[RMDB]
An RNA of 207 nucleotides, treated with 2A3 and DMS and read out base by base. The DMS profile rests on 7,005 reads. Values are in units of 0.01, from 0 to 300, in steps of 10. For 2A3 the reverse transcriptase was SuperScript II with manganese.

RNA sequence: GGGAACGACUCGAGUAGAGUCGAAAAAUCCGUACGGAAACCAUCCUACCUGAAGAGGAUGGGAAAGCAUGCCCUGGAUGGGAAAGCAUGCAACACCGGAUUCUUAUCCGGUAAUUCCUCCUAUAGGAGGACAACGUUCCAUCCGAAACGUACGGCCAUUGCAACCAUAAUUCGUUAUGGUUGCAAUAAAAGAAACAACAACAACAAC
Reactivity to 2A3 in 0.01 (KOAc 150mM, MgCl2 10mM, bicine 150mM(pH8.5), 24C), signal-to-noise 5, nucleotides 027 to 156: a000u020c000c000g000u000a000c010g010g030a110a010a040c010c000a010u010c010c010u120a300c030c090u150g060a130a050g070a040g020g000a000u010g000g000g010a030a010a010g010c010a010u020g020c000c010c070u060g000g040a010u010g000g000g020a110a010a000g010c020a000u030g010c010a050a030c010a010c040c010g010g010a010u280u070c080u240u300a020u010c000c000g000g000u000a000a020u040u010c000c010u040c000c020u240a230u130a300g010g010a000g010g000a000c040a040a040c080g040u050u020c010c000a000u000c010c000g020a100a040a000c000g010u000a000c000g000g000c010c010
Reactivity to DMS in 0.01 (KOAc 150mM, MgCl2 10mM, bicine 150mM(pH8.5), 24C), signal-to-noise 3, nucleotides 027 to 156: a050u010c000c000g030u000a030c000g050g010a110a100a110c010c010a040u000c000c000u000a300c110c050u000g000a140a190g010a090g020g010a030u010g010g000g010a030a060a170g020c010a040u000g010c050c060c030u010g020g000a040u000g000g000g000a030a050a140g020c020a050u010g000c040a090a090c130a070c010c000g010g010a040u010u000c190u010u000a060u000c000c000g050g030u000a030a030u010u000c000c000u000c000c010u010a200u010a200g040g010a040g010g020a050c090a040a050c080g000u000u000c000c010a010u000c000c000g000a100a040a040c030g010u000a000c010g010g010c150c080